An RNA of 207 nucleotides, treated with 2A3 and read out base by base. The RNA was probed in 150 mM KOAc, 10 mM MgCl2 and 150 mM bicine (pH 8.5) at 24 C. High 2A3 reactivity points to a flexible backbone, as in loops and unpaired stretches. The 2A3 profile rests on 1,128 reads.
RNA sequence: GGGAACGACUCGAGUAGAGUCGAAAAGAAAGAAAGAAAGAAGCCGGCUCUGCUUGUUUCACGGCAACCACGUUGAAAUUACAACGAAAGAAGCUCGCACUCAACUUCAACGGCUUAACGAGUGCAAAAAAGAAGUAUCACUUCGGUGAUACUUCAAGGAUAGUUAAGAGUUCGCUCUUAACUAUCCAAAAGAAACAACAACAACAAC
Reactivity to 2A3 in 0.01 (KOAc 150mM, MgCl2 10mM, bicine 150mM(pH8.5), 24C), signal-to-noise 2, nucleotides 027 to 156: g070a050a070a010g070a070a160a020g030a090a130a040g070a050a010g120c140c090g050g000c040u010c010u020g020c030u080u030g040u010u080u090c090a070c010g000g010c010a020a080c010c010a030c040g000u000u010g050a100a110a070u290u200a150c020a050a000c020g020a060a040a110g020a000a000g040c100u200c180g000c060a000c000u000c000a000a140c010u050u020c010a010a020c020g020g010c020u090u080a060a000c040g000a000g000u000g010c000a090a050a000a000a000a050g020a000a000g000u000a000u000c000a010c010u020u080c150g020g000u000g010a000u000a000c010u000u000c000a000a000